[RMDB]
RNA sequence: GGGAACGACUCGAGUAGAGUCGAAAAGAGAGGUAAACAAGGAGCGAGUUUAAAGGCUAGUCAGCUCAGCUGGCAACACCGUCAAAUUGCGGGAACAUCCUAAGAGCUAUCGACCACCAAGCAGGCUGCUGAAAGGCGUCUGUGGCCGGAUUAACGACAAUUAGAUAAUCUUCGGAUUAUCUAAUUGAAAAGAAACAACAACAACAAC
Reactivity to 2A3 in 0.01 (KOAc 150mM, MgCl2 10mM, bicine 150mM(pH8.5), 24C), signal-to-noise 9, nucleotides 027 to 156: g060a000g010a010g000g040u090a060a070a020c030a030a040g020g000a020g020c090g020a030g020u030u070u130a080a040a000g030g000c010u020a020g030u030c020a000g000c030u030c170a040g010c040u030g010g000c010a030a040c030a050c060c010g040u060c030a040a110a210u170u150g010c020g000g010g020a030a040c020a080u070c010c030u060a090a030g020a010g040c020u030a040u130c040g050a050c000c020a020c030c020a050a010g010c000a000g030g010c020u180g000c000u020g160a040a050a030g040g000c010g010u010c010u010g010u050g010g010c040c040g040g020a100u170u140a080a050c050g040a020
Reactivity to DMS in 0.01 (KOAc 150mM, MgCl2 10mM, bicine 150mM(pH8.5), 24C), signal-to-noise 5, nucleotides 027 to 156: g000a130g000a080g030g020u000a050a050a070c050a070a070g000g020a070g040c040g020a090g030u000u000u000a050a040a070g020g000c010u000a300g030u000c030a050g010c010u010c120a170g000c010u000g020g020c040a040a100c110a050c020c030g000u000c040a050a060a090u010u000g030c000g010g020g000a090a070c050a070u000c020c020u010a070a080g020a090g020c030u010a060u000c020g020a050c000c000a090c050c080a070a170g010c050a050g000g000c000u000g050c020u000g000a080a080a210g010g000c020g020u000c030u000g030u000g010g030c010c010g010g010a120u010u000a040a100c040g010a180